Notes
The record gives the reactivity of an RNA of 177 nucleotides to 2A3 and DMS. The 2A3 profile rests on 2,201 reads. For DMS the reverse transcriptase was MarathonRT. The DMS profile rests on 2,078 reads. Conditions: 150 mM KOAc, 10 mM MgCl2 and 150 mM bicine (pH 8.5), 24 C.
RNA sequence: GGGAACGACUCGAGUAGAGUCGAAAAAUAAAGCGUUAUCGCAUCCCAGUAGCAAAGAGCAGCGUAAAGGCGAAAGCCGAACUCAAGAUCGCAUCGGGCUAAGAUGCGAUCGUAGCCACGCAAAAAAGAUCUUCCUAUUCUUCGGAAUAGGAAGAUCAAAAGAAACAACAACAACAAC
Reactivity to 2A3 in 0.01 (KOAc 150mM, MgCl2 10mM, bicine 150mM(pH8.5), 24C), signal-to-noise 2, nucleotides 027 to 126: a020u120a010a100a000g010c040g130u150u150a150u270c020g020c000a000u020c010c000c000a030g130u130a010g000c090a030a100a070g060a030g020c150a030g000c010g070u080a080a010a150g030g000c020g020a010a010a000g010c020c000g010a020a000c040u040c060a020a040g000a030u000c010g000c000a000u000c010g090g110g000c040u110a090a010g000a000u000g000c010g000a000u000c010g000u010a000g000c040c030a030c020g000c060a040a000a000a000a010a010
Reactivity to DMS in 0.01 (KOAc 150mM, MgCl2 10mM, bicine 150mM(pH8.5), 24C), signal-to-noise 3, nucleotides 027 to 126: a100u000a060a070a090g000c030g010u020u000a120u010c030g010c010a120u010c010c000c010a160g030u000a090g010c050a040a080a100g000a090g030c040a060g000c080g040u000a080a100a170g000g000c010g000a080a060a130g010c000c020g000a130a030c050u000c060a090a090g000a000u000c000g000c000a010u010c010g020g020g020c240u010a070a140g010a000u010g000c000g000a000u000c000g000u000a030g010c110c090a050c110g010c090a000a030a060a060a050a040